[RMDB]
RNA sequence: GGGAACGACUCGAGUAGAGUCGAAAAACACGGAACUUCGGUUCCGUGUAUAGGGACGAAAUAACAGGAUAGCGCUUGUCGCCCGAGCAAAAAGGCGGAAAAACUGCAUCCUCUUCGGAGGAUGCAAUAUCAAAGUAAACUUCGGUUUACUUUGAUAAAAAGAAACAACAACAACAAC
Reactivity to DMS in 0.01 (KOAc 150mM, MgCl2 10mM, bicine 150mM(pH8.5), 24C), signal-to-noise 8, nucleotides 027 to 126: a030c000a010c000g010g010a010a010c000u000u010c190g040g000u000u000c000c000g030u000g000u000a000u010a070g010g000g010a060c060g000a070a070a070u000a080a080c110a080g010g000a110u000a070g000c070g010c020u000u000g010u010c030g020c010c010c020g000a070g010c100a040a050a050a080a060g000g010c030g010g010a050a050a070a080a110c200u000g000c000a010u000c000c010u000c000u000u010c190g020g000a010g000g000a000u000g000c000a000a010
Reactivity to 2A3 in 0.01 (KOAc 150mM, MgCl2 10mM, bicine 150mM(pH8.5), 24C), signal-to-noise 5, nucleotides 027 to 126: a000c000a000c000g000g000a010a000c000u040u080c220g060g000u000u000c000c000g000u000g000u000a000u030a010g010g000g030a030c030g090a090a040a080u160a100a060c060a030g070g030a080u060a070g080c060g010c050u020u040g030u060c000g010c010c010c010g030a030g020c080a040a070a050a020a030g040g000c040g060g020a040a070a020a010a000c050u030g000c000a000u000c020c000u010c010u040u080c240g090g000a010g000g000a000u000g000c000a000a000
An RNA of 177 nucleotides, treated with DMS and 2A3 and read out base by base. The 2A3 profile rests on 13,362 reads. It was measured as part of the RMDB library M2PK50. The DMS profile rests on 15,487 reads. The reactions ran in a buffer of 150 mM KOAc, 10 mM MgCl2 and 150 mM bicine (pH 8.5), at 24 C. Reactivities are given for positions 27 through 126.